RNA sequence: GGGAACGACUCGAGUAGAGUCGAAAAAUUGCGCAGUCAGUAUCAACAAUUGAGUGAUAGUGUCAGUGCUAGUUUGAUUUUGCAAUCACGUCAUUCUAGUAGGAAAAGUUCAUUAAAUUCACCUGCGACCGAUCGCAUUAUUCGUAAUGCGAUCGGUAAAAGAAACAACAACAACAAC
Reactivity to 2A3 in 0.01 (KOAc 150mM, MgCl2 10mM, bicine 150mM(pH8.5), 24C), signal-to-noise 3, nucleotides 027 to 126: a000u020u170g040c000g000c040a040g010u050c020a020g080u040a040u060c040a060a200c000a150a260u180u300g080a100g140u020g000a000u000a080g170u080g010u040c070a120g110u030g030c000u030a020g000u000u000u010g080a110u030u070u150u050g030c050a010a030u170c030a080c070g010u000c020a000u010u010c000u000a030g000u060a040g090g080a040a040a030a040g020u050u030c000a040u020u170a000a050a110u070u060c030a130c060c020u000g010c000g040
Reactivity to DMS in 0.01 (KOAc 150mM, MgCl2 10mM, bicine 150mM(pH8.5), 24C), signal-to-noise 1, nucleotides 027 to 126: a040u020u000g000c060g030c070a060g020u000c000a070g010u040a000u000c110a020a040c020a130a080u080u020g000a160g000u000g000a060u000a020g000u000g030u020c080a040g000u000g070c000u010a050g040u000u000u000g000a120u030u000u000u000g020c230a090a090u000c090a110c200g000u000c000a070u000u000c000u050a010g040u000a030g070g000a060a050a070a050g010u000u020c160a040u050u040a040a080a100u030u000c010a100c070c000u000g020c020g010
Record summary: The record gives the reactivity of an RNA of 177 nucleotides to 2A3 and DMS. The RNA was probed in 150 mM KOAc, 10 mM MgCl2 and 150 mM bicine (pH 8.5) at 24 C. The data come from the RNA Mapping Database (RMDB), library OK1LIB.